[RMDB]
RNA sequence: GGGAACGACUCGAGUAGAGUCGAAAACACAUAUCUACCAUUAUCCAAUAUGACAUAAAAGAAGACAUGAUAAACUGGAGUCUGAAUCAGUACAUUAUCUCCAAUCUCUGUAAAGGCACGGAUAAUGAUCAGCCCAGUGAUUCGUCACUGGGCUGAUAAAAGAAACAACAACAACAAC
Reactivity to 2A3 in 0.01 (KOAc 150mM, MgCl2 10mM, bicine 150mM(pH8.5), 24C), signal-to-noise 3, nucleotides 027 to 126: c180a030c020a030u180a030u080c040u240a160c020c020a000u020u020a000u040c000c000a020a020u300a120u300g150a050c040a050u200a090a040a000a060g130a030a040g020a000c070a000u250g040a020u050a000a130a000c080u070g000g070a040g120u140c070u140g140a080a080u020c020a000g060u090a040c000a130u020u080a020u100c000u000c010c000a000a090u030c020u000c000u030g140u100a110a050a020g170g000c080a000c100g030g000a000u000a020a000u040g000
Reactivity to DMS in 0.01 (KOAc 150mM, MgCl2 10mM, bicine 150mM(pH8.5), 24C), signal-to-noise 2, nucleotides 027 to 126: c040a060c230a120u000a030u000c060u000a070c280c000a000u000u000a000u000c000c000a040a030u000a070u000g000a150c050a180u020a120a030a120a030g000a060a070g000a090c120a070u000g000a000u000a000a040a020c040u000g040g000a100g000u050c110u010g000a050a000u000c010a010g010u000a090c300a300u020u000a080u000c040u000c300c170a090a190u000c000u000c040u030g000u050a100a200a300g000g000c170a000c230g010g000a000u050a120a010u050g000